[RMDB]
RNA sequence: GGGAACGACUCGAGUAGAGUCGAAAAGAGGGGGAUUCUAGCGCGGGAUAUAAUCAUGAUGUGUCCAUUCUGCGGGCGUGGAUCCGUACCACCAAGGUCACCGGUGAUCACCCGCUAGUGAUUGAGCAGUCCAUUAAGUGUUCGCACUUAAUGGACUAAAAGAAACAACAACAACAAC
Reactivity to 2A3 in 0.01 (KOAc 150mM, MgCl2 10mM, bicine 150mM(pH8.5), 24C), signal-to-noise 2, nucleotides 027 to 126: g180a070g000g030g000g000g010a020u050u020c010u000a020g040c030g010c100g060g000g020a010u080a000u060a140a070u110c030a040u110g100a030u120g100u010g010u080c020c000a030u110u030c010u120g040c000g000g000g000c060g070u090g130g030a040u000c000c000g020u040a050c000c040a080c050c080a120a110g030g010u030c010a000c030c090g040g030u030g020a000u030c020a070c040c010c020g000c000u020a020g030u010g070a070u080u050g010a020g050c050
Reactivity to DMS in 0.01 (KOAc 150mM, MgCl2 10mM, bicine 150mM(pH8.5), 24C), signal-to-noise 4, nucleotides 027 to 126: g020a130g000g000g010g000g010a090u000u000c030u010a070g020c080g020c100g000g000g000a090u000a050u010a100a070u000c070a070u000g010a130u010g010u010g020u000c040c030a100u010u000c070u000g010c040g020g020g030c070g020u000g010g010a050u000c060c030g010u000a080c040c020a110c140c150a100a130g010g000u000c020a030c060c080g000g010u000g010a130u010c100a060c010c010c010g000c020u020a040g010u000g010a050u010u000g010a080g000c190